[RMDB]
This 177-nucleotide RNA was probed chemically with DMS and 2A3. Reactivities are rounded to 0.1 and cut off at 0 and 3. It was measured as part of the RMDB libraries RFM100 and RFMREP. DMS adducts were read by reverse transcription with MarathonRT.
RNA sequence: GGGAACGACUCGAGUAGAGUCGAAAAGUGCGCCCGCAAGGCGUCGGAGCACCCUUUUAGAGGUGUGACGGCGUGCCUUUUGUAGAAUGAGCCAGCGAGUUGCUGGCCGUCGGCGAGGUUAAGCUGGCAUGAUGUGUCCGUUCGCGGACACAUCAUGAAAAGAAACAACAACAACAAC
Reactivity to DMS in 0.01 (KOAc 150mM, MgCl2 10mM, bicine 150mM(pH8.5), 24C), signal-to-noise 3, nucleotides 027 to 126: g040u020g000c150g000c000c010c040g040c080a040a040g000g030c010g020u000c000g010g000a300g000c000a000c000c020c010u000u020u040u030a110g000a100g020g020u020g010u000g000a300c000g020g000c000g020u020g010c000c000u000u000u010u010g000u030a070g000a040a050u020g010a160g010c000c000a010g010c020g000a160g020u060u040g010c010u010g000g020c020c020g000u010c010g000g000c010g010a060g000g000u000u000a040a110g050c020u000g020g000
Reactivity to 2A3 in 0.01 (KOAc 150mM, MgCl2 10mM, bicine 150mM(pH8.5), 24C), signal-to-noise 4, nucleotides 027 to 126: g110u100g050c050g010c000c000c000g010c000a000a010g030g000c000g000u020c000g000g000a030g010c000a010c000c000c000u010u150u030u190a180g080a120g020g000u020g010u020g000a030c000g000g000c000g040u050g040c020c010u040u000u060u070g070u070a050g030a150a110u070g010a010g050c000c000a000g000c000g080a220g210u240u270g100c010u000g000g020c000c000g000u010c010g000g020c010g000a080g040g030u060u090a090a040g010c020u010g020g000